Source: RMDB library ARCHII, as collected in RNAgym. An RNA of 207 nucleotides, treated with 2A3 and read out base by base. The 2A3 profile rests on 808 reads.

RNA sequence: GGGAACGACUCGAGUAGAGUCGAAAAUCGAGAGUGAGUCUCCUCUCGCAAAUCAAGGCUCAAAACAAAAGUAAAUGCGAAUAACAUCGUUAAAUUUGCUCGUAAGGACGCUCUAGUAGCUGCCUAAAUAGCCUCUUUCAGGUUCGAGCGUCUUCGGCUUGUAUCCCACGUUCGCGUGGGAUACAAGAAAAGAAACAACAACAACAAC
Reactivity to 2A3 in 0.01 (KOAc 150mM, MgCl2 10mM, bicine 150mM(pH8.5), 24C), signal-to-noise 2, nucleotides 027 to 156: u230c000g000a000g020a000g010u030g000a000g010u030c080u160c250c000u000c000u000c010g210c210a000a020a000u020c010a000a000g000g000c000u050c000a030a050a010a000c020a010a080a090a000g030u060a060a010a010u060g040c000g010a000a000u100a070a060c020a050u060c010g020u070u150a000a080a100u100u050u000g000c000u040c090g060u050a090a000g040g000a000c000g000c000u000c010u020a110g020u090a040g040c080u070g030c010c020u090a060a100a090u220a070g000c000c000u080c020u040u180u150c230a050g040g000u020u060c020g000a000g000c000g020u000c040u040u040c010g030g000